[RMDB]
RNA sequence: GGGAACGACUCGAGUAGAGUCGAAAAGGUGCCAAAGUAUUGAUUACAUAUCCUAAUAAAGAAAGAUUCUUGCGUAUUGGAUGUGCGCAUCCAUCUCUUCUUGAUCCUGUAGACGCUAAACAUGUUCAUUGUCCAGUUUGCUUUCUAUGUUCAAAGAGAUCAUGAUAUUAUUCGUAAUAUCAUGAUCAAAAGAAACAACAACAACAAC
Reactivity to 2A3 in 0.01 (KOAc 150mM, MgCl2 10mM, bicine 150mM(pH8.5), 24C), signal-to-noise 7, nucleotides 027 to 156: g040g020u060g050c030c020a060a030a030g040u070a100u120u150g060a080u110u140a050c020a030u120a060u090c000c020u140a160a080u130a150a170a020g070a040a080a010g050a060u090u040c030u040u050g000c040g020u070a050u050u140g120g030a090u130g060u020g040c040g000c020a000u000c020c010a050u000c030u020c020u130u000c010u030u050g020a020u050c000c010u020g020u040a020g010a030c020g000c040u090a050a060a050c040a060u130g050u150u110c050a070u070u130g020u010c000c010a020g010u040u010u030g030c000u000u110u020c040u050a070u100g060u070u060c040a080a080a080g140a040
Reactivity to DMS in 0.01 (KOAc 150mM, MgCl2 10mM, bicine 150mM(pH8.5), 24C), signal-to-noise 3, nucleotides 027 to 156: g020g010u000g020c040c020a050a080a150g030u000a060u000u000g020a140u010u000a080c040a110u000a110u000c010c010u000a070a130u000a080a050a070g000a060a050a080g010a120u010u000c060u000u000g020c030g040u000a050u000u010g030g010a090u000g030u010g020c040g020c000a020u000c030c020a050u000c010u000c070u010u000c010u000u000g010a120u000c050c010u010g030u000a080g010a070c030g020c030u000a050a060a100c080a080u000g020u000u000c070a090u000u000g010u000c020c040a140g020u000u000u000g000c030u000u010u000c060u010a100u000g010u000u010c060a040a090a140g010a300